[RMDB]
RNA sequence: GGGAACGACUCGAGUAGAGUCGAAAAAUAAAGGACACUUCAGCACCAAUCAAGGAUAAUACUUCAGUUGAUGCAAGUAUUAAGCCAGGAGAUACUAUACAUACUUGGUCAAAGAGACUGCGUGGUCUGACAAUAUCAAACAAUAGCACACUCAGAGACUGCUCAGCAUAUUCGUAUGCUGAGCAGUAAAAGAAACAACAACAACAAC
Reactivity to 2A3 in 0.01 (KOAc 150mM, MgCl2 10mM, bicine 150mM(pH8.5), 24C), signal-to-noise 1, nucleotides 027 to 156: a000u070a020a110a110g150g000a000c010a010c030u030u070c030a070g000c060a050c010c000a040a090u140c050a090a020g000g000a040u050a140a040u010a010c000u020u060c040a110g090u170u100g130a130u040g040c000a000a000g000u000a070u010u080a120a030g030c000c000a020g000g040a090g040a000u090a050c020u020a050u010a070c050a050u060a020c000u000u030g000g090u070c010a130a000a000g180a000g040a090c020u020g020c030g020u040g010g060u100c130u070g010a000c010a060a040u020a080u300c050a010a050a180c030a070a120u060a110g060c000a010c000a010c060u040c010a020g030a000g020
The record gives the reactivity of an RNA of 207 nucleotides to 2A3.
It was measured as part of the RMDB library OK3TST.